[RMDB]
RNA sequence: GGGAACGACUCGAGUAGAGUCGAAAAAACGCAUUUAUUAGAUAAUCCGCACCGCGUGCAAAUGACUUUAGUACCGGAUGCAACCAAGUCAGCGAAAGAGCAAGAAGCUGAAAAAGCACGUUUAGCACAGUAUAAAUGAUUUCGAUCAUUUAUACUGAAAAGAAACAACAACAACAAC
Reactivity to 2A3 in 0.01 (KOAc 150mM, MgCl2 10mM, bicine 150mM(pH8.5), 24C), signal-to-noise 7, nucleotides 027 to 126: a000a000c090g000c080a070u160u130u120a210u100u190a080g050a110u110a130a050u070c060c040g000c010a020c020c030g020c050g040u000g010c010a030a090a170u130g080a130c060u110u120u160a040g010u030a030c020c000g040g010a030u040g010c000a020a020c020c010a030a010g080u050c010a000g000c000g070a160a100a060g080a050g020c020a040a060g090a090a010g030c020u040g050a100a050a010a000a000g040c040a040c040g000u030u060u070a050g000c040a010
Reactivity to DMS in 0.01 (KOAc 150mM, MgCl2 10mM, bicine 150mM(pH8.5), 24C), signal-to-noise 8, nucleotides 027 to 126: a050a050c100g010c030a060u010u010u000a090u020u010a100g010a140u010a080a070u010c080c070g010c070a120c110c090g010c110g010u010g010c040a040a080a090u010g000a090c070u000u000u000a090g030u000a080c080c050g010g010a090u010g010c050a080a070c080c110a050a070g010u000c030a040g000c060g010a070a070a080g000a070g010c100a080a100g000a080a120g010c020u010g000a030a040a060a090a090g000c030a040c070g010u000u000u000a100g010c110a200